[RMDB]
RNA sequence: GGGAACGACUCGAGUAGAGUCGAAAAGCAGCAGUGAAUUAAAAUAAACAUGUAGAUCAAGAACAAGAUACAAACGGCAAGUAUCGUUCGAUCCAUGAGCCGAAUAAUAUCACAAAGAAGAAGAAAAAUAUUAUACCACCUUCGGGUGGUAUAAUAUAAAAGAAACAACAACAACAAC
Reactivity to DMS in 0.01 (KOAc 150mM, MgCl2 10mM, bicine 150mM(pH8.5), 24C), signal-to-noise 1, nucleotides 027 to 126: g030c110a050g030c130a120g000u000g010a080a050u000u000a040a110a130a090u000a060a100a040c010a030u000g010u030a040g090a050u000c010a120a090g030a030a040c070a140a100g000a010u000a030c050a100a070a130c100g010g020c110a010a040g000u000a040u010c000g040u000u010c050g000a000u000c030c000a010u000g000a130g030c020c050g000a130a140u000a090a010u000a070u000c000a030c030a040a110a110g000a080a140g050a130a090g010a000a050a010a020
Structure probing data (DMS) for a 177-nucleotide construct. The RNA was probed in 150 mM KOAc, 10 mM MgCl2 and 150 mM bicine (pH 8.5) at 24 C. The DMS profile rests on 492 reads.